[RMDB]
RNA sequence: GGGAACGACUCGAGUAGAGUCGAAAAUCUAAUGAAUGAUGAUAUAAUUUGCGAUCUAGGGCUAAUCACUUUGAACACCGCCAUGUUCUAUAUGGGUGCUUAGCGAAAUGCGAAAAGUUUUUUAUCUGGUAGAAACCGUAUUCGUACGGUUUCUACCAAAAGAAACAACAACAACAAC
Reactivity to 2A3 in 0.01 (KOAc 150mM, MgCl2 10mM, bicine 150mM(pH8.5), 24C), signal-to-noise 1, nucleotides 027 to 126: u040c000u030a130a110u140g190a130a020u180g040a000u040g000a000u000a000u030a120a300u130u130u060g090c090g010a070u040c040u050a070g070g270g000c000u000a000a000u000c000a080c010u010u000u060g000a000a000c050a000c000c060g070c130c000a020u000g000u000u000c010u030a120u040a070u300g000g000g000u000g000c000u010u000a020g000c000g060a050a050a000u130g000c000g000a000a010a020a020g020u020u020u020u020u020u020a230u050c040u000